RNA sequence: GGGAACGACUCGAGUAGAGUCGAAAAACAGAGCGAAGGGGGGACGGAGAAGGCUAUGUUGGCCGGGCGACGGUUGUCGCGGUUUAAGCGUGUAGGCUGGUUUUCCAGGCAAAUCCGGAAAAAGAAAUCUACGCAAUAUGUUCGCAUAUUGCGUAGAAAAAGAAACAACAACAACAAC
Reactivity to DMS in 0.01 (KOAc 150mM, MgCl2 10mM, bicine 150mM(pH8.5), 24C), signal-to-noise 2, nucleotides 027 to 126: a070c060a070g010a080g000c030g020a080a090g000g000g020g030g000g010a080c060g000g000a060g020a090a090g000g000c040u000a060u000g010u010u000g020g010c040c040g020g000g020c060g010a040c060g010g000u020u000g020u000c020g020c060g000g000u010u000u010a060a100g000c040g010u000g000u000a090g000g000c020u000g010g000u000u010u000u000c020c010a090g000g000c100a060a080a090u010c030c030g010g000a030a030a040a110a080g020a040a070a120

This 177-nucleotide RNA was probed chemically with DMS. The reactions ran in a buffer of 150 mM KOAc, 10 mM MgCl2 and 150 mM bicine (pH 8.5), at 24 C. The DMS profile rests on 2,467 reads. It was measured as part of the RMDB library M2PK90. DMS adducts were read by reverse transcription with MarathonRT. High DMS reactivity at an A or C suggests that its Watson-Crick edge is free.